[RMDB]
RNA sequence: GGGAACGACUCGAGUAGAGUCGAAAAUUGUGGUCAAGACCUUGGCGUAGUAUCCAAGGUUGUCAAGGUUCCAAUUGACUUAACAAUGAUUGAGUUUAUGUUAUGGUGUAAGGAUGGACAGGGGAAAUUAGAUCCUUCGGUUCGCCGAAGGAUCUAAAAAAGAAACAACAACAACAAC
Reactivity to DMS in 0.01 (KOAc 150mM, MgCl2 10mM, bicine 150mM(pH8.5), 24C), signal-to-noise 2, nucleotides 027 to 126: u000u010g040u000g000g000u000c060a050a080g000a010c010c000u000u000g000g010c180g010u010a090g030u000a150u010c040c080a050a040g020g000u000u020g020u030c070a050a060g020g000u000u000c040c090a070a190u000u000g010a050c010u000u000a020a050c010a050a040u010g000a130u000u010g000a070g000u000u000u000a050u040g000u010u010a030u000g010g000u010g000u000a090a080g000g040a060u000g020g000a060c080a110g010g000g010g010a050a060a170
Background
The data come from the RNA Mapping Database (RMDB), library M2PK90. The record gives the reactivity of an RNA of 177 nucleotides to DMS. Reactivities are given for positions 27 through 126.